[RMDB]
Record summary:
Source: RMDB library OK2TRN, as collected in RNAgym. An RNA of 177 nucleotides, treated with DMS and 2A3 and read out base by base. 2A3 adducts were read by reverse transcription with SuperScript II with manganese.
RNA sequence: GGGAACGACUCGAGUAGAGUCGAAAAGGCCGAGCUCCAACCCAGGGAGGGAAUAUAUACAAGGCGCGAUUUAAGGCGCAAGUAUGUAUAGGGAAGUGAAGAAGCCCCGAAAACUUCACACGGCCGAAAAUAGUACUCCUUUCGAGGAGUACUAUUUAAAAGAAACAACAACAACAAC
Reactivity to DMS in 0.01 (KOAc 150mM, MgCl2 10mM, bicine 150mM(pH8.5), 24C), signal-to-noise 4, nucleotides 027 to 126: g030g020c010c000g010a140g020c050u000c020c020a060a220c030c020c030a190g000g010g000a070g010g010g020a150a030u000a010u000a010u000a000c000a030a220g010g000c000g010c010g010a160u010u020u010a130a120g030g000c010g020c010a030a150g010u000a010u000g020u010a000u000a110g000g010g000a110a170g010u000g000a010a050g020a200a160g020c110c020c030c060g000a070a090a070a120c010u000u010c010a010c010a250c010g000g010c000c000g010a060
Reactivity to 2A3 in 0.01 (KOAc 150mM, MgCl2 10mM, bicine 150mM(pH8.5), 24C), signal-to-noise 2, nucleotides 027 to 126: g000g000c030c010g000a020g100c010u000c010c030a120a160c010c000c080a020g080g050g020a100g000g000g000a020a010u030a000u010a000u000a000c020a080a280g130g000c020g000c000g000a020u030u210u260a180a060g130g000c000g000c010a000a020g020u000a010u010g000u000a000u010a020g050g030g030a100a040g040u030g020a000a010g030a110a030g130c030c040c000c000g030a130a080a110a140c000u000u010c010a010c000a000c050g000g000c010c000g020a050